[RMDB]
RNA sequence: GGGAACGACUCGAGUAGAGUCGAAAAUAAGAAAACACAAGUCCCAGUGCUAUCAGGGGCUAUCUGGAAAAGCUGCUUAAACAGCAAGUGAAAGAAGGCUCUCCCCUACCCCGUUCUAGACUCACCCUGACAGUCAUAGGUUCGCCUAUGACUGUCGAAAAGAAACAACAACAACAAC
Reactivity to DMS in 0.01 (KOAc 150mM, MgCl2 10mM, bicine 150mM(pH8.5), 24C), signal-to-noise 6, nucleotides 027 to 126: u040a070a110g010a100a050a080a120c070a030c080a080a150g000u000c000c000c000a100g020u000g020c060u010a080u020c090a120g020g020g000g010c030u000a020u000c040u020g010g000a100a120a080a120g000c030u000g000c030u010u050a120a110a160c050a010g010c020a050a130g020u010g020a140a090a050g010a070a300g000g000c020u010c020u000c020c000c010c040u010a140c030c010c020c030g000u000u000c020u010a130g010a030c060u000c040a120c010c020c020
Reactivity to 2A3 in 0.01 (KOAc 150mM, MgCl2 10mM, bicine 150mM(pH8.5), 24C), signal-to-noise 9, nucleotides 027 to 126: u220a040a030g140a030a090a030a010c100a020c040a110a010g040u020c010c000c000a020g050u080g050c060u070a090u230c070a050g000g010g030g000c020u020a080u060c030u050g060g020a030a040a040a050g020c010u020g010c030u160u180a120a150a030c020a030g040c040a080a070g060u060g130a110a060a060g080a040a010g050g000c000u000c010u020c020c000c000c000u030a040c000c000c010c010g010u030u010c010u040a030g010a060c010u010c040a070c010c000c010
The data come from the RNA Mapping Database (RMDB), library OK1LIB. Chemical mapping of a 177-nucleotide RNA with DMS and 2A3. For DMS the reverse transcriptase was MarathonRT. The reactions ran in a buffer of 150 mM KOAc, 10 mM MgCl2 and 150 mM bicine (pH 8.5), at 24 C. Values are in units of 0.01, from 0 to 300, in steps of 10.